[RMDB]
RNA sequence: GGGAACGACUCGAGUAGAGUCGAAAAUUGAAGGUAAAACAGCCUGUGGGUGAAACACACCCACAGGGCCCAUAGGGCGCUAGCACUCGGGUAUCACGGUACCUUUGUGCGCCUGUUUUACCGAAGGUGACGUUGGUGUUCGCACCAACGAAAAGAAACAACAACAACAAC
Reactivity to 2A3 in 0.01 (KOAc 150mM, MgCl2 10mM, bicine 150mM(pH8.5), 24C), signal-to-noise 2, nucleotides 027 to 129: u130u110g070a110a020g000g000u000a000a000a000a000c000a000g000c000c000u000g000u010g000g010g000u000g040a060a110a010c110a020c000a000c050c010c000a000c000a000g000g000g000c000c000c000a040u200a110g000g000g000c010g020c100u120a050g000c010a000c000u020c010g020g000g000u000a000u020c030a020c190g130g000u000a000c000c000u000u000u010g010u000g000c010g000c000c000u000g000u000u000u000u000a000c000c000g010a000a010g040g030u080g030a040
Reactivity to DMS in 0.01 (KOAc 150mM, MgCl2 10mM, bicine 150mM(pH8.5), 24C), signal-to-noise 5, nucleotides 027 to 129: u010u020g000a170a180g000g000u000a000a000a000a000c000a010g020c020c000u000g000u020g000g010g000u000g000a100a130a080c300a120c030a000c000c000c000a020c010a000g020g000g000c010c000c000a030u060a090g040g010g020c020g000c030u030a060g000c010a000c040u000c040g040g000g030u000a000u020c040a090c230g070g020u030a000c000c000u020u010u010g010u000g010c000g000c020c020u000g000u020u010u000u010a010c020c020g000a040a080g030g010u000g000a120

Structure probing data (2A3 and DMS) for a 170-nucleotide construct.
The 2A3 profile rests on 32,198 reads.
For 2A3 the reverse transcriptase was SuperScript II with manganese.
For DMS, 44,806 sequencing reads were counted.